Notes:
Conditions: 150 mM KOAc, 10 mM MgCl2 and 150 mM bicine (pH 8.5), 24 C. The record gives the reactivity of an RNA of 207 nucleotides to 2A3 and DMS. The data come from the RNA Mapping Database (RMDB), library PDB130.
RNA sequence: GGGAACGACUCGAGUAGAGUCGAAAAAGGGUUCCUGGGGAAGGGUCGUCCGCCCAGGGAAAGUCGGGACCUAAGGUGAGGCCGAACGGCGCAGCCGAUGGACAGCAGGUCAAGAUUCCUGCACCGAUCAUGUGGAGUGAUGGAGGGACGCAUUACGGUCUUAUACGUACUUCGGUACGUAUAAGACAAAAGAAACAACAACAACAAC
Reactivity to 2A3 in 0.01 (KOAc 150mM, MgCl2 10mM, bicine 150mM(pH8.5), 24C), signal-to-noise 3, nucleotides 027 to 156: a000g050g000g020u070u020c010c000u020g040g000g000g080a060a140g080g010g000u080c040g060u060c020c040g040c030c030c040a040g000g010g040a040a010a020g040u040c020g010g010g100a140c000c000u040a060a070g020g000u050g030a040g010g020c000c040g050a160a070c270g000g000c070g000c000a000g000c000c000g000a020u030g020g000a040c010a000g000c000a000g050g000u100c110a000a120g040a140u070u060c000c000u000g000c000a010c000c020g000a040u070c020a040u110g050u070g020g050a110g020u090g070a100u050g020g010a060g050g010g020a010c010g010c050a000u160u120a060c080g010
Reactivity to DMS in 0.01 (KOAc 150mM, MgCl2 10mM, bicine 150mM(pH8.5), 24C), signal-to-noise 2, nucleotides 027 to 156: a090g000g000g040u000u010c000c000u010g030g010g020g010a110a100g000g010g030u000c050g010u010c040c020g000c000c010c010a070g040g000g020a040a020a070g010u000c030g000g020g020a210c010c030u000a100a190g010g020u000g000a230g000g020c010c000g030a070a130c100g020g040c000g000c060a300g040c020c020g000a190u000g010g030a130c080a220g020c000a010g000g020u000c020a150a110g010a300u040u000c010c000u030g000c000a240c050c030g000a080u000c060a090u000g000u030g000g010a180g020u020g010a070u000g040g000a180g000g000g000a040c020g030c040a080u000u010a050c060g000

For 2A3 the reverse transcriptase was SuperScript II with manganese. The DMS profile rests on 2,749 reads. The 2A3 profile rests on 1,612 reads.